[RMDB]
RNA sequence: GGGAACGACUCGAGUAGAGUCGAAAAGAUACAUUCACAGAUGAAUCUGUCGGUGAUGUUUACUUGCAUGAUUCACAGUUAAAACUUCACUUACUGGUAGUACUGUGCUGGAUGGAUCCUGUGUGUGAUUCUUACGCAUGGGAAUUGCAUUCAAACAAGCUAAAUCCGUAUUCGUACGGAUUUAGCUAAAAGAAACAACAACAACAAC
Reactivity to DMS in 0.01 (KOAc 150mM, MgCl2 10mM, bicine 150mM(pH8.5), 24C), signal-to-noise 2, nucleotides 027 to 156: g020a240u000a110c020a000u000u000c030a120c070a090g020a090u010g000a150a100u000c030u010g030u000c050g010g000u010g010a080u010g000u000u000u000a060c020u010u000g010c010a120u000g010a270u000u010c070a060c040a020g000u000u000a090a040a070a050c040u000u000c020a030c070u000u000a080c070u020g020g020u000a080g080u000a090c090u000g000u000g020c200u000g030g000a070u000g010g000a080u000c000c020u000g050u040g000u000g010u000g000a220u000u010c110u010u000a050c050g040c010a070u000g010g000g000a050a040u000u000g000c010a100u000u000c020a020a050a120c160a090
Reactivity to 2A3 in 0.01 (KOAc 150mM, MgCl2 10mM, bicine 150mM(pH8.5), 24C), signal-to-noise 4, nucleotides 027 to 156: g050a000u160a030c060a080u070u140c020a020c010a020g050a060u070g060a070a090u030c030u050g020u010c010g020g030u000g010a050u040g010u040u090u070a160c050u030u030g040c030a130u140g100a240u280u140c080a050c070a040g030u050u090a000a030a070a090c030u040u040c030a010c040u010u050a000c030u050g020g010u030a040g000u020a130c010u000g010u020g050c050u040g020g010a000u010g010g030a020u000c000c000u000g000u000g000u000g000u020g050a160u170u080c080u190u110a030c030g000c020a010u010g000g000g010a070a030u020u070g110c000a000u000u000c000a000a060a090c060a070

The record gives the reactivity of an RNA of 207 nucleotides to DMS and 2A3.
For 2A3 the reverse transcriptase was SuperScript II with manganese.
For DMS, 2,899 sequencing reads were counted.
It was measured as part of the RMDB library OK3TST.